[RMDB]
RNA sequence: GGGAACGACUCGAGUAGAGUCGAAAAAGAACUGGCCGAAUCCUGGGCUUUCGAUUGACGGCUGGCCGCGCCACGAGCAGCUUCGACGCCUUUCAGGUACAUGUCGAGCGCCAGAACUUCCUGGCCCGAUGGUGACGUACUUCGGUACGUCACCAUCAAAAGAAACAACAACAACAAC
Reactivity to DMS in 0.01 (KOAc 150mM, MgCl2 10mM, bicine 150mM(pH8.5), 24C), signal-to-noise 2, nucleotides 027 to 126: a050g000a080a190c050u010g040g020c020c000g000a180a110u010c030c030u010g040g000g020c050u000u000u010c050g000a050u000u000g020a110c100g000g000c020u000g000g000c010c050g040c070g000c090c060a090c100g020a090g020c030a070g000c030u010u000c080g020a090c300g000c080c080u000u000u030c140a000g000g000u000a050c130a100u030g010u000c030g030a170g010c170g000c000c030a060g000a030a160c090u010u000c030c020u010g010g000c060c020c020
Reactivity to 2A3 in 0.01 (KOAc 150mM, MgCl2 10mM, bicine 150mM(pH8.5), 24C), signal-to-noise 1, nucleotides 027 to 126: a000g040a060a030c010u030g020g000c000c010g010a040a070u090c030c000u040g040g000g120c000u040u070u070c030g070a080u090u090g070a060c120g050g000c030u030g090g260c020c030g020c050g010c020c000a040c050g000a050g000c030a010g000c000u080u070c060g000a020c030g000c030c010u190u300u100c060a000g010g000u110a060c000a210u240g090u080c050g070a040g110c100g000c030c000a040g010a100a040c040u090u020c000c030u020g010g000c000c000c000
Source information:
Chemical mapping of a 177-nucleotide RNA with DMS and 2A3. It was measured as part of the RMDB library OK2TRN.